Structure probing data (DMS and 2A3) for a 177-nucleotide construct. The 2A3 profile rests on 6,341 reads. The data come from the RNA Mapping Database (RMDB), library TTRDEL. 2A3 adducts were read by reverse transcription with SuperScript II with manganese. The RNA was probed in 150 mM KOAc, 10 mM MgCl2 and 150 mM bicine (pH 8.5) at 24 C. DMS adducts were read by reverse transcription with MarathonRT. Values are in units of 0.01, from 0 to 300, in steps of 10.

RNA sequence: GGGAACGACUCGAGUAGAGUCGAAAAGAUAUGGACAAAUAGCUUUUGACGCUCAAAAAGGGUCGGAAACGACCUACAAAGAGCGAUAAGCUAUUGUCCUAAGUCAAAAUCACUGUUCGCAGUGAAAGAUAGAAAUUAACUUCGGUUAAUUUCUAUCAAAAGAAACAACAACAACAAC
Reactivity to DMS in 0.01 (KOAc 150mM, MgCl2 10mM, bicine 150mM(pH8.5), 24C), signal-to-noise 3, nucleotides 027 to 126: g000a020u000a250u000g010g000a020c020a000a020a050u000a000g010c000u000u000u010u010g030a200c050g020c000u000c000a030a050a100a210a170g000g000g000u000c010g000g000a030a060a120c000g000a000c000c000u000a040c140a060a110a150g000a000g010c010g010a080u000a010a020g000c000u000a000u000u000g000u000c000c000u000a020a080g000u010c010a070a100a160a140u010c010a010c010u000g000u000u010c170g020c020a010g010u000g010a010a080a090
Reactivity to 2A3 in 0.01 (KOAc 150mM, MgCl2 10mM, bicine 150mM(pH8.5), 24C), signal-to-noise 4, nucleotides 027 to 126: g020a020u040a020u080g010g000a010c030a050a230a120u000a010g000c020u090u120u120u300g210a200c030g000c010u030c010a060a090a040a110a190g120g000g000u000c000g000g000a000a030a000c000g010a010c000c000u010a010c020a000a150a020g010a000g010c010g100a120u080a050a000g000c000u000a000u010u010g000u000c000c000u000a050a000g040u000c010a000a030a020a280u050c010a000c010u010g030u120u090c300g020c120a000g000u000g050a030a020a010